[RMDB]
RNA sequence: GGGAACGACUCGAGUAGAGUCGAAAACACAAGGCAGCAAUCACAACUUCCAAUGCCUUUGUGAUAAGGUCAUGUGGCCUAGGCAGUUUGAUGUGCUUCAGAUGUAUCGGGGGUGCACUCUCAUUGCACCCGGCUGAUAAUUCGUUAUCAGCCGGGUAAAAGAAACAACAACAACAAC
Reactivity to DMS in 0.01 (KOAc 150mM, MgCl2 10mM, bicine 150mM(pH8.5), 24C), signal-to-noise 6, nucleotides 027 to 126: c030a030c040a050a060g000g020c040a050g010c140a150a050u000c060a030c100a060a060c210u000u010c080c120a110a100u010g010c100c060u000u010u010g030u010g000a070u010a090a150g020g010u010c030a080u010g010u000g000g010c010c020u000a090g010g010c020a030g010u000u010u000g000a050u010g020u010g010c020u000u000c040a070g010a080u000g010u010a090u000c060g000g010g000g000g000u000g000c040a020c150u010c030u000c060a080u000u000g010c080
Reactivity to 2A3 in 0.01 (KOAc 150mM, MgCl2 10mM, bicine 150mM(pH8.5), 24C), signal-to-noise 5, nucleotides 027 to 126: c030a000c010a000a020g050g000c020a030g000c040a070a070u080c030a050c040a130a070c050u190u050c060c050a070a150u090g030c010c000u030u060u140g030u010g010a060u050a120a050g060g010u020c020a040u110g080u160g110g000c010c020u020a040g100g000c040a020g000u030u060u040g060a040u020g020u040g050c000u040u040c020a030g020a210u100g080u200a140u170c060g020g010g010g010g000u010g000c010a020c050u020c000u000c030a050u000u090g010c010